[RMDB]
RNA sequence: GGGAACGACUCGAGUAGAGUCGAAAAUCAACGUUCAGUUUGGAACGUCUCGAUAUGCGUUAACUGAUUUGUCGAAACAUCAUCUGCUUUUGGUGACAGCAUCGCACUCAUAAUAUUAUGGCCAUCUGUCGUAUGCCCUAAUCCAAGCGCGUGGCCGGUGUUCAUAGUUGUUCGCAACUAUGAACACAAAAGAAACAACAACAACAAC
Reactivity to DMS in 0.01 (KOAc 150mM, MgCl2 10mM, bicine 150mM(pH8.5), 24C), signal-to-noise 1, nucleotides 027 to 156: u000c010a060a040c020g000u010u000c020a140g040u010u000u000g000g000a060a010c040g000u000c060u000c080g000a130u010a110u000g020c050g000u010u010a110a090c010u000g000a060u010u010u000g050u000c000g000a110a080a090c030a090u000c070a100u000c180u010g010c050u000u000u000u010g070g010u000g010a070c000a030g030c040a140u000c030g030c030a080c030u000c090a110u000a040a100u020a100u000u000a080u000g030g010c010c010a050u000c040u010g020u000c020g030u000a100u000g000c020c030c030u000a070a060u010c110c030a060a200g020c020g000c030g030u000g000g010c000c010g010
Reactivity to 2A3 in 0.01 (KOAc 150mM, MgCl2 10mM, bicine 150mM(pH8.5), 24C), signal-to-noise 6, nucleotides 027 to 156: u080c010a010a020c010g010u000u010c040a150g040u070u180u300g110g020a010a000c020g040u000c050u050c070g070a070u040a050u150g060c050g020u060u070a090a060c010u030g040a120u090u050u140g080u050c050g020a070a050a060c020a060u080c010a020u040c050u060g070c100u070u060u070u070g040g000u030g000a030c000a020g040c030a030u030c030g010c030a040c020u090c070a030u060a230a050u130a140u260u150a120u190g010g000c020c010a050u050c110u140g100u090c020g000u050a080u110g060c000c000c040u050a070a060u050c070c030a080a040g040c010g000c000g010u030g010g000c000c030g020